Chemical mapping of a 207-nucleotide RNA with 2A3 and DMS. The RNA was probed in 150 mM KOAc, 10 mM MgCl2 and 150 mM bicine (pH 8.5) at 24 C.
[RMDB]
RNA sequence: GGGAACGACUCGAGUAGAGUCGAAAACUAGACACAGGCGCGCGCUACCAGCCUUGCAUCGUCUACCCAGAAGAGAUGGUGAUCGACAAGGACGGGAACAAGAAGACCCAGCCGUCGAGCACCGGAAUCCCGGCGAUCGCCAGGUUCCAGGUGGCCACAUGCCUAAAGUUUUCGAACUUUAGGCAUGAAAAGAAACAACAACAACAAC
Reactivity to 2A3 in 0.01 (KOAc 150mM, MgCl2 10mM, bicine 150mM(pH8.5), 24C), signal-to-noise 3, nucleotides 027 to 156: c030u020a030g110a060c050a020c050a180g110g020c050g000c010g000c020g010c100u010a010c000c010a000g020c000c000u000u010g000c010a020u010c010g020u000c010u100a140c040c040c040a070g080a180a010g040a030g020a030u080g000g020u020g010a020u010c010g010a010c020a110a230g020g020a050c020g020g000g030a100a080c070a190a060g180a060a020g040a090c010c000c020a020g050c020c010g000u000c000g000a010g000c000a000c000c000g000g020a010a000u040c030c050c020g000g000c000g010a040u060c120g010c010c020a000g000g030u060u040c060c040a040g000g010u010g000g000c000c000a020
Reactivity to DMS in 0.01 (KOAc 150mM, MgCl2 10mM, bicine 150mM(pH8.5), 24C), signal-to-noise 2, nucleotides 027 to 156: c010u020a090g040a160c030a080c020a080g040g040c070g000c030g060c110g040c000u000a080c030c000a290g000c000c000u010u000g000c000a080u010c050g030u000c020u020a130c000c030c050a160g020a150a110g020a130g010a170u010g030g020u010g010a020u010c000g020a050c010a100a140g050g020a130c020g030g010g000a130a210c020a110a200g010a100a210g020a190c020c000c010a100g020c000c020g040u000c000g010a060g000c030a040c010c010g030g010a060a100u010c040c010c040g030g020c000g010a070u000c070g070c020c020a040g000g010u010u000c020c010a090g050g000u000g020g010c020c040a150

It was measured as part of the RMDB library OK3TST. DMS adducts were read by reverse transcription with MarathonRT.